[RMDB]
RNA sequence: GGGAACGACUCGAGUAGAGUCGAAAAGAUAUGGAGCGGGAGCUCUGAGCUCGUUGAUCUCGGAAACGAGGGAGAGCGAAAGAGCGAGGAUCGCUCCUAAGUCAAAAGAAGCGCUUCGGCGCUUCAAGAUUACAGUCAUCUUCGGAUGACUGUAAUCAAAAGAAACAACAACAACAAC
Reactivity to 2A3 in 0.01 (KOAc 150mM, MgCl2 10mM, bicine 150mM(pH8.5), 24C), signal-to-noise 2, nucleotides 027 to 126: g030a010u070a040u240g010g010a000g020c010g000g000g020a000g000c010u000c010u010g000a010g000c000u010c000g260u300u010g000a010u000c000u000c000g000g080a180a090a070c010g000a000g000g000g000a030g010a000g000c000g050a050a040a000g000a010g000c000g000a030g000g020a010u010c000g000c000u020c000c000u000a000a020g000u030c030a020a030a060a200g000a010a000g000c020g010c030u070u160c300g130g000c000g000c000u000u000c030a000a010
Reactivity to DMS in 0.01 (KOAc 150mM, MgCl2 10mM, bicine 150mM(pH8.5), 24C), signal-to-noise 3, nucleotides 027 to 126: g000a070u010a300u000g010g000a010g020c000g010g000g010a100g010c000u000c000u000g000a300g010c000u000c000g010u000u010g030a030u000c000u000c010g000g000a080a090a170c000g000a030g000g010g000a030g000a020g010c000g000a030a070a010g000a010g020c010g010a090g010g000a040u020c000g000c000u000c000c000u000a010a080g010u000c030a090a060a130a190g010a030a010g010c000g030c010u000u010c170g010g000c000g010c000u000u000c010a040a070